[RMDB]
Overview: This 177-nucleotide RNA was probed chemically with DMS and 2A3. For 2A3 the reverse transcriptase was SuperScript II with manganese. The 2A3 profile rests on 3,248 reads.

RNA sequence: GGGAACGACUCGAGUAGAGUCGAAAAGCGGCGAAGCAGAGACGGUGGGCCAGCGUCUCUGGACUGGCCCUUUUUGCGAUGGCAGGUCCUGCUAACGCAGAUAGCCGCGAAUGCCUUUUGGCUAAAAGGGAAUCGGCAUGUUCGCAUGCUGAUUCCCAAAAGAAACAACAACAACAAC
Reactivity to DMS in 0.01 (KOAc 150mM, MgCl2 10mM, bicine 150mM(pH8.5), 24C), signal-to-noise 3, nucleotides 027 to 126: g000c020g000g020c010g000a150a080g000c000a020g000a050g020a050c040g010g030u000g010g000g010c020c010a170g000c020g020u000c020u000c040u040g010g000a080c070u000g000g000c020c010c020u000u000u000u010u000g020c020g000a080u010g010g000c000a060g030g030u030c130c040u000g000c000u030a020a050c070g000c030a000g000a040u000a130g000c000c020g000c030g000a060a080u030g010c030c040u000u040u020u010g000g020c050u040a070a080a080a060
Reactivity to 2A3 in 0.01 (KOAc 150mM, MgCl2 10mM, bicine 150mM(pH8.5), 24C), signal-to-noise 4, nucleotides 027 to 126: g000c020g040g000c030g040a020a000g130c000a010g000a000g000a040c010g060g060u190g080g040g030c010c010a030g070c010g010u020c000u020c010u010g010g060a060c040u040g060g030c000c040c000u010u030u000u020u020g050c020g010a040u080g020g000c000a020g060g140u150c060c010u000g000c000u010a040a020c030g000c000a000g000a020u020a020g010c020c010g000c000g010a030a030u120g030c000c000u100u170u130u110g060g000c060u090a050a050a070a080
DMS adducts were read by reverse transcription with MarathonRT. DMS (dimethyl sulfate) methylates the pairing face of unpaired adenines and cytosines. The RNA was probed in 150 mM KOAc, 10 mM MgCl2 and 150 mM bicine (pH 8.5) at 24 C.